Chemical mapping of a 177-nucleotide RNA with DMS and 2A3. Source: RMDB library OK1LIB, as collected in RNAgym.
RNA sequence: GGGAACGACUCGAGUAGAGUCGAAAACGCCAGUGGCAUGUGAUCUGUACGUUAUGUGCUGACUCGCAUCCUAUAAGCGUAGAUGCGAUGCUCGUCGUUGCGCAGGUGAGUAUCCCUGGUCCUAGCAUCUAGGCUUGCGCUUCGGUGCAAGUCUAGAAAAAGAAACAACAACAACAAC
Reactivity to DMS in 0.01 (KOAc 150mM, MgCl2 10mM, bicine 150mM(pH8.5), 24C), signal-to-noise 9, nucleotides 027 to 126: c080g010c010c040a150g020u020g000g000c170a020u000g020u000g010a060u010c020u000g010u010a060c020g000u020u030a060u050g010u010g010c010u010g010a030c140u000c010g010c000a020u000c140c020u000a070u020a110a150g010c060g000u000a060g010a080u010g000c100g000a020u000g010c030u000c020g000u000c020g010u020u010g010c020g020c040a190g000g000u010g000a070g010u010a040u000c010c020c020u010g000g000u000c010c010u000a090g010c180a150
Reactivity to 2A3 in 0.01 (KOAc 150mM, MgCl2 10mM, bicine 150mM(pH8.5), 24C), signal-to-noise 9, nucleotides 027 to 126: c030g000c000c000a020g030u060g030g000c050a010u020g010u010g020a020u010c010u020g030u060a020c010g020u060u120a060u140g040u050g020c030u070g010a010c020u000c000g000c000a000u000c000c010u070a060u020a070a030g060c040g030u010a020g000a020u020g000c010g010a010u030g000c030u000c000g020u010c000g020u040u050g000c000g000c010a000g000g030u020g020a040g020u030a020u010c010c000c000u000g000g000u010c010c000u000a010g010c010a030
Source information: Values cover nucleotides 27 to 126.